RNA sequence: GGGAACGACUCGAGUAGAGUCGAAAAGAUAUGGACAUCGUCUCGCUAGCGACUGAAUCCUAAGACAGCUUGUCGGAAACGACAAGUCGAGGAUUCUGUCGCUUGGACCGAGACGAUGUCCUAAGUCGUAAAAGGAUAGGUUCGCCUAUCCUUUUACAAAAGAAACAACAACAACAAC
Reactivity to 2A3 in 0.01 (KOAc 150mM, MgCl2 10mM, bicine 150mM(pH8.5), 24C), signal-to-noise 2, nucleotides 027 to 126: g050a020u200a100u250g030g000a000c020a020u000c010g020u040c000u010c010g010c060u000a020g000c000g000a000c010u020g020a000a010u010c020c000u040a150a060g100a020c030a040g040c010u000u020g010u000c000g050g000a130a100a050c010g010a010c000a020a000g000u070c010g000a010g000g000a000u000u000c000u000g000u010c010g010c010u000u020g000g020a080c030c060g000a030g010a000c000g000a000u000g000u000c010c010u000a000a000g010u030c020
Reactivity to DMS in 0.01 (KOAc 150mM, MgCl2 10mM, bicine 150mM(pH8.5), 24C), signal-to-noise 7, nucleotides 027 to 126: g010a100u010a300u000g000g010a030c000a020u000c000g010u010c000u000c000g010c030u000a030g020c010g010a010c000u000g010a010a010u000c000c010u020a300a150g000a090c300a110g010c010u000u000g010u000c000g000g000a130a130a180c000g000a010c000a010a000g000u000c030g000a020g010g010a010u000u010c000u000g000u000c000g000c000u000u000g010g010a100c300c010g000a020g000a010c000g010a010u000g000u000c010c000u010a000a070g000u000c120